[RMDB]
RNA sequence: GGGAACGACUCGAGUAGAGUCGAAAAGCUAGUCGGAGACGACUAGCAACGAUCAGUUCGCUGAUCGGAAGGUGCAUUCAAAUACGCUAGAAGCACCAAUACACGACGCAUAGCGUAAAACUGAGAAAGCAGAUAACAAAAAUAAAAAGGCGUCGUGCAUUUACCGGACCUUCGGGUCCGGUAAAUGAAAAGAAACAACAACAACAAC
Reactivity to 2A3 in 0.01 (KOAc 150mM, MgCl2 10mM, bicine 150mM(pH8.5), 24C), signal-to-noise 1, nucleotides 027 to 156: g040c010u000a000g000u000c000g020g020a010g010a040c000g000a010c000u000a000g000c000a000a000c000g000a000u010c010a010g050u010u120c130g000c130u000g000a000u000c020g000g040a070a010g010g000u010g020c060a300u000u030c000a050a040a040u050a040c040g000c000u010a010g000a070a000g020c000a000c000c000a030a000u070a020c000a000c000g020a000c010g000c030a090u100a030g020c000g000u010a000a080a060a040c090u050g050a080g200a150a070a000g070c010a010g080a070u150a170a070c080a040a090a070a060a000u210a010a140a030a040a000g070g020c010g000u000c000g000u000g000
About this RNA
The record gives the reactivity of an RNA of 207 nucleotides to 2A3. The RNA was probed in 150 mM KOAc, 10 mM MgCl2 and 150 mM bicine (pH 8.5) at 24 C. Source: RMDB library OK3TST, as collected in RNAgym. Values cover nucleotides 27 to 156.